[RMDB]
RNA sequence: GGGAACGACUCGAGUAGAGUCGAAAAGAAAGAAAGAAAAGUCGACGACUCGAAAGAGUCGAGAUGGAAACAUCGCAUCGAACAACGGAGGAGAUGCUCGACGAACAACCUCCGAGAAAAAGAAAAAGGGAAUGACUAUGUUCGCAUAGUCAUUCCCAAAAGAAACAACAACAACAAC
Reactivity to 2A3 in 0.01 (KOAc 150mM, MgCl2 10mM, bicine 150mM(pH8.5), 24C), signal-to-noise 1, nucleotides 027 to 126: g130a000a010a010g140a040a080a000g130a080a030a020a060g050u050c000g000a020c000g000a000c000u000c000g000a030a000a100g000a000g000u000c000g000a000g000a000u000g010g030a020a000a070c000a000u010c040g000c040a010u010c000g010a060a030c060a090a030c090g000g010a000g000g000a080g000a000u000g030c030u010c040g180a260c030g000a020a000c010a010a100c000c000u000c000c010g010a050g120a000a160a000a000a000g170a020a050a010a010a000